[RMDB]
RNA sequence: GGGAACGACUCGAGUAGAGUCGAAAACUAUUUGUUUGACUUAUGCAAACAUAGUCUACGAGCCCACUACUCCCAUUUCGUCAGCGCUGAUUGCAGUUGCAAAUUGGCUUGCCCCCACUAAUGCUUAGGUAAUCAUAAUCUUCGGAUUAUGAUUACCAAAAGAAACAACAACAACAAC
Reactivity to DMS in 0.01 (KOAc 150mM, MgCl2 10mM, bicine 150mM(pH8.5), 24C), signal-to-noise 3, nucleotides 027 to 126: c020u010a040u000u010u010g020u000u000u000g000a090c110u000u000a120u010g010c010a020a000a030c020a030u000a020g030u000c050u000a230c150g020a120g000c020c020c060a090c080u000a160c090u010c030c020c060a110u000u010u010c100g020u000c060a060g020c120g010c020u000g000a050u010u000g010c010a240g030u010u010g010c020a020a020a060u000u010g000g010c010u000u010g010c020c020c020c010c040a100c190u010a090a040u020g010c070u000u000a200
Reactivity to 2A3 in 0.01 (KOAc 150mM, MgCl2 10mM, bicine 150mM(pH8.5), 24C), signal-to-noise 2, nucleotides 027 to 126: c010u010a050u070u120u140g030u010u000u020g070a100c040u200u220a090u300g050c010a000a020a020c000a000u010a000g000u020c050u060a040c070g060a030g050c000c020c020a050c030u100a090c010u010c000c000c030a070u040u080u070c040g100u090c030a000g020c030g000c050u050g020a040u050u090g030c040a070g110u140u120g050c000a060a010a110u030u030g020g050c000u000u090g020c000c000c020c010c000a020c030u080a100a050u050g010c020u010u040a010

An RNA of 177 nucleotides, treated with DMS and 2A3 and read out base by base. It was measured as part of the RMDB library 15KREP. For 2A3, 1,899 sequencing reads were counted. For DMS, 2,603 sequencing reads were counted.